[RMDB]
RNA sequence: GGGAACGACUCGAGUAGAGUCGAAAACGACGUAUCCUUCGCCCCCGUCGGUUGUGUGCAACUCAACAGACAAUUCGAUUGUAUGAGACCCCUUCUGAAGACUCCCAUGCCUCAUAUGCGUGACUAACGUGGAGGAGGAGUUCGCUCCUCCUCCACGAAAAGAAACAACAACAACAAC
Reactivity to DMS in 0.01 (KOAc 150mM, MgCl2 10mM, bicine 150mM(pH8.5), 24C), signal-to-noise 1, nucleotides 027 to 126: c050g000a080c080g000u000a120u000c070c020u000u000c050g000c010c040c010c000c050g050u000c030g010g010u010u000g000u000g010u000g010c130a070a140c050u000c060a020a170c040a040g000a020c030a100a120u010u030c080g010a070u000u000g010u000a070u000g000a130g000a160c070c070c030c040u000u000c040u000g010a090a030g000a090c060u000c020c020c080a100u020g000c010c010u030c030a070u000a090u010g000c050g030u010g010a140c120u010a060a120